[RMDB]
RNA sequence: GGGAACGACUCGAGUAGAGUCGAAAACACCGAGAAAGGCCCCAGGCAAUAAGCACUGCUAAUACUUAUAACCCACGGUUAAACUCCGUGGCUCUCUCGUGCUUCUAAAGGAUAACAGCUCAUCCAUUGGUCUUAGGAACCAAAAACUCUUGGUGCAACUACUUGAUCUAUUCGUAGAUCAAGUAGUAAAAGAAACAACAACAACAAC
Reactivity to DMS in 0.01 (KOAc 150mM, MgCl2 10mM, bicine 150mM(pH8.5), 24C), signal-to-noise 2, nucleotides 027 to 156: c020a040c020c010g010a030g010a030a170a160g030g010c040c020c020c110a160g000g010c020a100a050u000a040a050g020c010a050c020u000g010c080u000a060a270u000a090c030u010u010a060u000a090a100c160c000c000a000c020g020g020u000u000a080a100a300c120u000c000c000g020u000g010g010c010u000c020u000c070u010c020g040u000g010c040u000u010c040u020a020a080a080g000g040a060u000a060a070c080a100g030c080u000c140a090u000c000c040a170u000u000g010g010u010c020u000u000a150g000g000a060a070c000c000a000a020a030a060a050c040u000c030u000u010g010g040u000g010c020a080
Reactivity to 2A3 in 0.01 (KOAc 150mM, MgCl2 10mM, bicine 150mM(pH8.5), 24C), signal-to-noise 6, nucleotides 027 to 156: c020a010c010c010g000a020g040a070a110a010g060g030c030c010c020c020a040g030g020c030a050a140u060a140a020g010c010a010c040u040g070c050u130a100a100u120a260c100u200u210a120u110a280a060c020c000c000a000c010g000g020u010u060a030a040a040c060u000c010c000g010u000g000g000c000u020c000u000c000u010c040g020u020g030c000u040u020c020u210a160a130a030g020g000a030u040a150a050c040a080g040c040u050c070a040u010c030c000a050u020u040g030g010u000c020u060u080a100g030g050a070a090c000c000a030a020a040a050a080c050u060c010u040u040g010g000u030g020c010a030
An RNA of 207 nucleotides, treated with DMS and 2A3 and read out base by base.
For 2A3 the reverse transcriptase was SuperScript II with manganese.
For DMS the reverse transcriptase was MarathonRT.
The reactions ran in a buffer of 150 mM KOAc, 10 mM MgCl2 and 150 mM bicine (pH 8.5), at 24 C.
The 2A3 profile rests on 4,934 reads.
It was measured as part of the RMDB library OK3TST.